[RMDB]
RNA sequence: GGGAACGACUCGAGUAGAGUCGAAAAAGACAGAAGUCUCAAGAUUGCAUCUACAAAUAUGCUGUUUUAGAAGUUUGAAGAAUACUACUGAGAACAUAGAGAAUUGGAAGAAAAACCAGUUUAGGCCAGUGACAACUAUUAGUUCAUUGUCAGUAUAACUCUGUAGGAGUUUCGACUCCUACAGAGUAAAAGAAACAACAACAACAAC
Reactivity to 2A3 in 0.01 (KOAc 150mM, MgCl2 10mM, bicine 150mM(pH8.5), 24C), signal-to-noise 2, nucleotides 027 to 156: a000g060a000c030a010g210a100a040g090u010c020u040c030a020a050g020a090u010u090g030c020a030u020c050u160a160c080a030a180a010u250a020u030g000c020u010g150u090u070u040u110a070g050a100a020g040u080u170u070g060a080a040g010a070a020u070a080c030u000a000c000u030g010a010g040a110a010c020a040u100a030g090a040g040a050a080u050u030g020g020a050a000g070a060a190a000a010a000c000c010a010g000u050u050u030a040g020g020c030c000a000g030u000g040a030c000a050a020c060u080a030u140u090a050g050u070u030c040a040u030u110g020u030c040a030g020u060a040u180a160
Reactivity to DMS in 0.01 (KOAc 150mM, MgCl2 10mM, bicine 150mM(pH8.5), 24C), signal-to-noise 2, nucleotides 027 to 156: a080g000a110c010a060g010a150a160g010u000c040u000c060a100a110g000a080u000u000g010c030a190u010c100u000a180c050a090a050a090u000a060u000g030c000u000g050u010u000u000u030a100g020a050a140g030u020u000u010g020a130a060g020a140a090u000a060c030u050a090c070u010g020a150g020a050a060c060a140u000a090g010a150g010a090a000u000u000g000g000a070a140g020a040a050a040a120a100c040c010a000g000u000u000u010a050g000g030c020c020a080g010u000g000a050c030a000a130c080u000a100u000u030a090g000u000u010c050a120u000u000g000u000c000a070g000u000a070u000a100
Structure probing data (2A3 and DMS) for a 207-nucleotide construct. Reactivities are given for positions 27 through 156. The RNA was probed in 150 mM KOAc, 10 mM MgCl2 and 150 mM bicine (pH 8.5) at 24 C. For 2A3, 982 sequencing reads were counted.